An RNA of 207 nucleotides, treated with 2A3 and DMS and read out base by base.
RNA sequence: GGGAACGACUCGAGUAGAGUCGAAAAAGAAAAGGGCUAAGAAUCUCACUGAGUGGUGAAUGCUUGCCUGGCCAGCAUGAGGUACUGGAGUUCAUGUUCAGCUCCCUCAAAAAUUCUAUUAAAAAGUGGGAGCAAGGGCUUCGAAUGGAGGAGUUAAACUAUUUAUCCAUUUCGAUGGAUAAAUAGUAAAAGAAACAACAACAACAAC
Reactivity to 2A3 in 0.01 (KOAc 150mM, MgCl2 10mM, bicine 150mM(pH8.5), 24C), signal-to-noise 2, nucleotides 027 to 156: a000g040a000a070a010a010g010g000g030c070u090a090a030g010a080a120u050c030u020c060a020c000u120g090a050g120u210g040g000u080g030a080a020u110g030c040u050u040g000c010c010u010g010g000c010c000a010g010c010a040u060g020a040g040g040u090a100c060u100g030g040a040g000u000u020c020a000u090g060u060u040c020a050g000c000u010c020c000c000u030c030a040a090a000a000a040u260u160c110u180a290u230u180a130a080a040a030a020g010u010g010g000g000a010g000c000a010a000g000g010g020c000u050u050c100g060a050a030u090g000g020a010g020g000a020g010u060u220a030a070
Reactivity to DMS in 0.01 (KOAc 150mM, MgCl2 10mM, bicine 150mM(pH8.5), 24C), signal-to-noise 2, nucleotides 027 to 156: a120g010a050a070a130a100g000g000g040c060u000a020a090g000a120a060u010c060u020c010a100c050u000g000a140g030u010g020g010u010g000a020a060u000g020c000u000u000g010c010c000u000g030g020c030c030a170g000c050a130u020g010a090g050g000u000a020c090u010g020g000a070g000u000u000c010a060u000g000u020u000c050a170g010c020u000c140c000c000u000c010a050a070a090a060a090u000u000c060u000a210u000u010a050a080a080a080a120g020u010g000g010g000a060g020c030a030a030g010g030g000c030u040u000c040g020a060a090u000g000g010a070g000g020a070g010u000u010a100a070

For DMS, 2,830 sequencing reads were counted. DMS (dimethyl sulfate) methylates the pairing face of unpaired adenines and cytosines.